[RMDB]
RNA sequence: GGGAACGACUCGAGUAGAGUCGAAAAACACGUAGGGCGAGGGGUUGGCGAAAGUUGCCAUGAGACCGUAACUUUCGUAGUCAUUGAUAAAGGGGCAGGUCUCGCUCUUUUGUCAUUGCGGUUGCCUAAAACUGUGGUUCGUUCGCGAACCACAGAACCAUUGAAUACGCUUCGGCGUAUUCAAUGGAAAAGAAACAACAACAACAAC
Reactivity to 2A3 in 0.01 (KOAc 150mM, MgCl2 10mM, bicine 150mM(pH8.5), 24C), signal-to-noise 3, nucleotides 027 to 156: a000c050a010c060g060u050a090g000g030g030c010g040a050g000g040g000g030u000u100g040g010c000g040a000a010a000g020u020u020g030c030c030a140u180g100a060g030a110c060c060g000u020a000a020c010u000u020u020c020g020u020a050g060u060c060a070u040u040g030a020u040a030a020a010g020g020g030g000c060a010g030g160u040c070u060c080g000c000u000c050u000u030u010u020g010u010c010a020u000u050g010c030g070g010u040u070g010c010c010u100a100a120a040a060c000u000g000u000g000g000u000u000c000g010u020u030c140g000c020g110a000a000c010c020a000c000a000g000a000a010
Reactivity to DMS in 0.01 (KOAc 150mM, MgCl2 10mM, bicine 150mM(pH8.5), 24C), signal-to-noise 1, nucleotides 027 to 156: a100c030a120c090g020u000a090g010g040g020c040g000a100g010g010g030g030u000u000g010g030c000g000a020a020a040g020u000u000g050c010c020a180u000g000a070g010a140c100c130g000u000a030a040c020u010u000u010c020g030u000a140g000u010c100a100u000u000g020a030u000a030a040a010g000g010g010g000c030a030g030g000u000c040u010c040g000c040u000c030u000u000u000u000g020u000c020a100u000u000g010c050g050g040u000u010g000c030c030u000a040a090a100a110c010u020g000u000g000g010u000u000c000g040u010u000c280g000c040g000a000a010c000c000a010c010a000g000a010a130
An RNA of 207 nucleotides, treated with 2A3 and DMS and read out base by base. For DMS, 2,688 sequencing reads were counted. In probing experiments dimethyl sulfate is read out at A N1 and C N3, which are open when not base-paired. The RNA was probed in 150 mM KOAc, 10 mM MgCl2 and 150 mM bicine (pH 8.5) at 24 C. Values cover nucleotides 27 to 156.